[RMDB]
RNA sequence: GGGAACGACUCGAGUAGAGUCGAAAAUCCGUGCAUCGCCCAUGUGCUACGGUAAGGGUCUCACUCUAAGUGGGCUACACUAGUUAAUCUCCGUCUGGGGUUAAAUAGAAGAGCUUAAUCAGACUAGCUGAAUGGAAGCCUGUUACCGGGCCGAUGUGUGCAGGAUUGAGUUCGCUCAAUCCUGCACAAAAGAAACAACAACAACAAC
Reactivity to 2A3 in 0.01 (KOAc 150mM, MgCl2 10mM, bicine 150mM(pH8.5), 24C), signal-to-noise 1, nucleotides 027 to 156: u030c000c000g020u020g060c090a190u000c070g000c000c000c010a050u050g010u000g050c220u240a020c000g000g080u070a060a150g080g000g110u020c050u000c050a060c000u090c050u190a240a030g000u000g060g000g000c010u040a000c060a000c000u000a000g020u030u010a000a100u000c100u020c090c020g040u010c050u100g010g010g010g000u050u040a000a160a000u000a000g060a100a000g040a040g000c000u040u160a040a040u110c000a000g010a020c040u030a010g100c020u080g060a130a060u150g020g010a100a110g010c040c000u070g060u110u180a190c260c000g010g020g080c000c010g010a020u050g110u000